[RMDB]
RNA sequence: GGGAACGACUCGAGUAGAGUCGAAAAGAUAUGGAUCCCGGUAGGGAGAGCCACAUCGGAAACGAUGUGUGCUCGACGAUCUACGGAUCCUAAGUCAAAGUUACGGCAGCUUCGGCUGCCGUAACAACAACUCUUACGUGUUCGCACGUAAGAGUUGAAAAGAAACAACAACAACAAC
Reactivity to 2A3 in 0.01 (KOAc 150mM, MgCl2 10mM, bicine 150mM(pH8.5), 24C), signal-to-noise 1, nucleotides 027 to 126: g000a000u010a010u030g010g010a020u040c030c130c250g150g050u040a000g000g000g010a010g010a000g000c010c010a000c000a010u020c000g000g010a000a000a000c010g030a010u020g020u030g000u050g010c000u000c000g000a100c010g000a000u010c000u000a010c030g010g000a000u010c000c000u000a000a000g000u000c030a210a220a010g020u000u010a000c020g000g000c000a020g000c030u100u250c300g220g000c020u000g040c000c010g010u010a000a000c000a000a000
Reactivity to DMS in 0.01 (KOAc 150mM, MgCl2 10mM, bicine 150mM(pH8.5), 24C), signal-to-noise 2, nucleotides 027 to 126: g000a010u000a020u000g010g000a010u010c020c050c300g030g040u000a010g000g000g000a000g010a010g010c010c010a010c000a010u000c000g000g010a000a000a030c000g000a000u000g030u000g000u000g020c000u000c000g000a060c220g000a010u000c000u000a030c010g000g000a000u000c000c000u000a010a090g010u000c000a110a120a210g010u000u000a000c000g000g010c000a010g010c010u000u010c300g040g000c000u000g000c000c000g000u000a000a000c000a140a140

The record gives the reactivity of an RNA of 177 nucleotides to 2A3 and DMS. DMS adducts were read by reverse transcription with MarathonRT. Values are in units of 0.01, from 0 to 300, in steps of 10. For 2A3 the reverse transcriptase was SuperScript II with manganese. Conditions: 150 mM KOAc, 10 mM MgCl2 and 150 mM bicine (pH 8.5), 24 C. Source: RMDB library TTRDES, as collected in RNAgym. For 2A3, 3,755 sequencing reads were counted.